[RMDB]
About this RNA
Structure probing data (2A3 and DMS) for a 177-nucleotide construct. For DMS, 7,001 sequencing reads were counted. Conditions: 150 mM KOAc, 10 mM MgCl2 and 150 mM bicine (pH 8.5), 24 C. The 2A3 profile rests on 6,010 reads. Source: RMDB library M2PK50, as collected in RNAgym.
RNA sequence: GGGAACGACUCGAGUAGAGUCGAAAAGGGUAGAUCUUCGGAUCUACCCAAAAGGAGCAACCAACGAAGGAAGUGCUAGCAUAAGCGUGCAGGGUAGCACUAAAAGGUUCCGCUUCGGCGGAACCAACAAUAAGCACCAGUUCGCUGGUGCUUAUUGAAAAGAAACAACAACAACAAC
Reactivity to 2A3 in 0.01 (KOAc 150mM, MgCl2 10mM, bicine 150mM(pH8.5), 24C), signal-to-noise 4, nucleotides 027 to 126: g000g000g000u010a000g000a000u030c020u050u070c250g030g010a000u000c000u000a000c000c000c000a010a010a000a000g020g010a040g030c010a000a060c020c010a040a060c070g100a070a040g120g070a090a010g010u030g040c000u020a040g020c010a060u060a270a080g090c060g070u060g010c060a020g070g070g100u050a010g000c010a010c030u040a000a050a000a070g000g000u000u000c000c010g000c010u040u030c210g070g010c010g000g020a000a000c000c000a010a010
Reactivity to DMS in 0.01 (KOAc 150mM, MgCl2 10mM, bicine 150mM(pH8.5), 24C), signal-to-noise 5, nucleotides 027 to 126: g000g010g000u000a000g000a000u000c000u000u010c210g020g010a010u010c000u010a000c000c000c010a000a010a050a060g000g000a060g010c050a070a130c030c040a060a080c120g010a090a090g000g000a110a050g020u000g000c020u010a060g010c030a070u000a090a100g020c130g020u000g010c030a120g010g020g010u000a030g010c010a020c040u000a050a060a080a100g000g010u000u000c000c000g010c000u000u000c170g040g010c000g010g000a000a010c000c000a030a030